[RMDB]
RNA sequence: GGGAACGACUCGAGUAGAGUCGAAAACAUACUAUUUCAUUAAAAAGGCCAUUCUUUCGGUGUGUUGAGAACAUGGAGAGUAGAAAGAGGUCCUAGCAGAGCAGCUCAUCAUGCCACUUUAUACUGAGUCUUUUGAUAGCACUGAAUUGCAAAGCUAGUUCUCUACUCGUUUCGACGAGUAGAGAACAAAAGAAACAACAACAACAAC
Reactivity to 2A3 in 0.01 (KOAc 150mM, MgCl2 10mM, bicine 150mM(pH8.5), 24C), signal-to-noise 2, nucleotides 027 to 156: c020a060u300a060c010u120a130u100u250u150c070a050u090u250a190a040a020a000a000g100g000c070c040a080u110u010c030u000u090u080c050g020g000u000g010u000g000u000u140g020a090g000a080a010c010a030u050g050g010a070g000a000g080u100a030g040a020a060a020g080a040g020g070u020c030c070u060a030g000c030a000g010a020g060c010a010g010c050u020c010a040u020c010a030u040g030c060c000a070c030u140u250u070a100u060a060c050u050g010a020g060u000c000u010u070u080u020g140a100u110a000g020c010a010c060u050g030a170a000u040u110g070c010a150a000a000g000c000u030a030